[RMDB]
RNA sequence: GGGAACGACUCGAGUAGAGUCGAAAACGCACGGUAAACGUGUACAAGCCUUUGGUGCGGCGAAAAAUCAGGCGAUCAUCAUGCCUGAUGCUGAUUUGGAUGCGACCGUAAAUGCAUUAAUGGGUGGGCGUAAGCAACACUUCGGUGUUGCUUACGCAAAAGAAACAACAACAACAAC
Reactivity to DMS in 0.01 (KOAc 150mM, MgCl2 10mM, bicine 150mM(pH8.5), 24C), signal-to-noise 2, nucleotides 027 to 126: c190g020c010a000c000g000g000u020a060a100a120c140g030u000g000u010a070c130a100a180g000c000c000u000u000u000g030g000u000g000c070g020g000c060g000a030a070a020a080a030u000c000a000g040g000c010g020a150u040c160a080u010c170a080u020g020c060c060u000g000a000u020g000c080u000g010a120u000u010u000g000g000a150u000g000c030g000a040c050c060g010u010a090a070a100u010g000c060a040u010u000a040a070u000g000g000g000u010g010g000
Reactivity to 2A3 in 0.01 (KOAc 150mM, MgCl2 10mM, bicine 150mM(pH8.5), 24C), signal-to-noise 2, nucleotides 027 to 126: c050g000c000a000c010g000g050u130a100a180a010c050g010u010g010u010a040c030a030a050g090c030c020u070u030u080g080g060u120g110c030g000g020c020g110a070a070a000a010a040u000c010a000g030g040c060g070a090u040c050a050u000c010a040u260g080c020c000u000g000a000u000g000c010u030g010a150u040u050u140g080g000a040u070g060c010g040a080c030c000g010u060a040a050a060u090g000c010a040u000u060a080a030u080g010g030g020u080g000g120